[RMDB]
Structure probing data (2A3) for a 207-nucleotide construct. It was measured as part of the RMDB library M2RFPK. The reactions ran in a buffer of 150 mM KOAc, 10 mM MgCl2 and 150 mM bicine (pH 8.5), at 24 C. The 2A3 profile rests on 396 reads. For 2A3 the reverse transcriptase was SuperScript II with manganese.

RNA sequence: GGGAACGACUCGAGUAGAGUCGAAAAACAAAAAUAGAGAGCUUUGCGAGACCUACCAAGGGUGAAGAGAUACCAUCCAAGGAGCUGAAGAGAAAUCUCACUUUAGACGCCUGGGGAACUCGGACUAAAAAGCUUCGUACGUUCGCGUACGAAGCAAGAUACUAUAUCAGUUCGCUGAUAUAGUAUCAAAAGAAACAACAACAACAAC
Reactivity to 2A3 in 0.01 (KOAc 150mM, MgCl2 10mM, bicine 150mM(pH8.5), 24C), signal-to-noise 1, nucleotides 027 to 156: a000c010a010a020a070a020a000u270a040g090a050g000a020g030c040u090u100u120g040c060g000a040g010a130c000c020u050a070c120c070a060a090g030g030g000u050g050a090a060g080a000g000a040u090a050c010c040a030u050c010c000a040a030g030g030a020g020c000u030g040a060a000g050a030g110a100a100a150u090c040u040c010a060c020u020u050u110a070g030a150c090g030c050c040u050g000g000g000g000a040a060c020u020c070g080g030a040c030u100a090a100a050a000a000g000c000u000u010c010g000u000a020c020g030u000u050c180g000c000g110u010a000c000g000a000a000g060c000a010a010